[RMDB]
RNA sequence: GGGAACGACUCGAGUAGAGUCGAAAAGCUAGUCGAUCGAUCGCUAGCAGUCGCGAUCAGAUGACUAGGUACGUGUCUGUGAUCGUACGAUCUGUACAUGACGUCAUGAUCUGAUCCAUACAGGUACUCCCAAGGGGUGGUUCGCCACCCCUUGGGAAAAAGAAACAACAACAACAAC
Reactivity to 2A3 in 0.01 (KOAc 150mM, MgCl2 10mM, bicine 150mM(pH8.5), 24C), signal-to-noise 1, nucleotides 027 to 126: g040c010u010a000g000u010c040g240a090u000c020g000a020u000c000g000c040u140a080g270c040a040g180u060c090g050c000g000a030u000c000a130g030a110u040g000a000c000u000a010g040g000u020a030c130g190u020g000u100c080u040g120u230g080a000u000c000g060u110a020c170g020a030u030c000u030g060u170a010c030a220u270g210a070c080g010u040c010a040u150g000a010u000c040u040g000a020u010c000c000a000u000a030c000a000g150g050u040a020c050
Reactivity to DMS in 0.01 (KOAc 150mM, MgCl2 10mM, bicine 150mM(pH8.5), 24C), signal-to-noise 1, nucleotides 027 to 126: g020c010u000a020g010u000c020g000a040u000c070g000a060u010c000g040c000u000a130g010c210a070g020u000c110g000c010g010a000u000c000a080g000a030u000g000a020c000u010a020g000g010u000a000c010g020u000g000u000c040u000g020u010g010a010u000c000g010u010a110c240g000a020u000c000u000g000u020a020c030a170u010g010a130c300g000u010c020a070u000g000a020u000c020u000g010a060u000c000c010a060u020a020c010a030g000g020u000a030c030